About this RNA
An RNA of 207 nucleotides, treated with 2A3 and DMS and read out base by base. For 2A3, 2,131 sequencing reads were counted. It was measured as part of the RMDB library OK3TST. For DMS, 2,844 sequencing reads were counted.
RNA sequence: GGGAACGACUCGAGUAGAGUCGAAAAUUUAGCAAGGCAGAAGCAAGCACUUUAGAAGGGACUCAGAACCUAGGGCCAAGACUUAGGUAAUGCAGCAGCACACUUCCCUCACGUGGCCUUUGCUCCUUCUUUCUGGACACUGUGCUCUCUGUGGAGGAUCCGUACUAGAGUUCGCUCUAGUACGGAUAAAAGAAACAACAACAACAAC
Reactivity to 2A3 in 0.01 (KOAc 150mM, MgCl2 10mM, bicine 150mM(pH8.5), 24C), signal-to-noise 3, nucleotides 027 to 156: u100u090u050a030g020c020a040a040g030g000c010a000g010a090a000g030c020a030a010g000c010a030c040u060u090u060a040g020a030a030g030g000g030a020c020u010c100a030g010a080a070c010c020u020a020g010g050g020c090c080a130a010g060a090c030u010u020a000g030g000u060a040a020u060g010c060a030g000c020a020g010c040a010c010a020c090u050u070c030c000c000u000c000a020c030g020u020g010g000c010c000u030u030u050g040c080u020c020c000u110u180c000u120u230u060c090u080g010g000a010c010a010c030u060g060u100g080c000u020c010u000c050u200g020u040g080g010a020g020g030
Reactivity to DMS in 0.01 (KOAc 150mM, MgCl2 10mM, bicine 150mM(pH8.5), 24C), signal-to-noise 1, nucleotides 027 to 156: u000u010u000a070g010c050a100a110g030g000c010a150g000a050a100g010c020a040a060g010c030a050c010u000u000u010a040g020a070a020g000g020g020a180c060u000c050a110g090a100a060c040c000u010a090g040g040g020c040c100a080a090g010a180c010u000u010a050g010g010u000a020a140u000g000c060a030g020c080a080g020c020a080c030a060c080u000u000c040c000c000u000c050a010c050g040u000g000g030c010c030u000u010u010g000c090u000c010c010u010u010c090u000u000u000c090u000g030g020a060c000a060c020u000g010u000g000c020u000c060u000c050u030g010u000g020g010a090g000g010